[RMDB]
RNA sequence: GGGAACGACUCGAGUAGAGUCGAAAACGAGCUAUCUGCACGACUAGCUGUGCUACUAGGUACUGAUCCGUAGUACUCGGUACAUAGUACGUCCAUGUGGUACCGUCGGAUCGCUGCGAUGCUAUGCCACACGAGCACCGUUCGCGGUGCUCGUGUGAAAAGAAACAACAACAACAAC
Reactivity to DMS in 0.01 (KOAc 150mM, MgCl2 10mM, bicine 150mM(pH8.5), 24C), signal-to-noise 2, nucleotides 027 to 126: c070g000a070g010c020u010a050u000c020u010g030c060a070c210g020a120c050u000a170g000c000u010g020u000g010c070u000a050c030u000a080g000g010u000a010c050u000g000a060u010c090c110g020u010a100g020u000a030c130u000c000g030g000u000a050c050a060u000a050g000u010a090c190g000u000c060c030a120u010g040u010g000g000u020a040c060c050g010u000c040g010g000a040u000c080g010c160u000g010c060g000a060u000g010c060u010a060u000g000c090
Reactivity to 2A3 in 0.01 (KOAc 150mM, MgCl2 10mM, bicine 150mM(pH8.5), 24C), signal-to-noise 2, nucleotides 027 to 126: c020g010a020g040c040u120a010u150c020u110g020c030a000c000g020a000c050u050a000g040c010u030g040u050g090c010u000a040c020u000a030g000g040u010a070c020u060g030a070u120c080c020g000u030a040g060u000a040c060u000c020g000g000u030a030c040a060u190a030g050u050a030c030g110u020c070c030a070u100g030u030g000g010u030a040c040c040g100u070c030g050g000a120u060c030g000c090u080g000c020g010a030u060g010c020u070a030u200g050c040

Structure probing data (DMS and 2A3) for a 177-nucleotide construct. Conditions: 150 mM KOAc, 10 mM MgCl2 and 150 mM bicine (pH 8.5), 24 C. Reactivities are given for positions 27 through 126. It was measured as part of the RMDB library OK2TRN.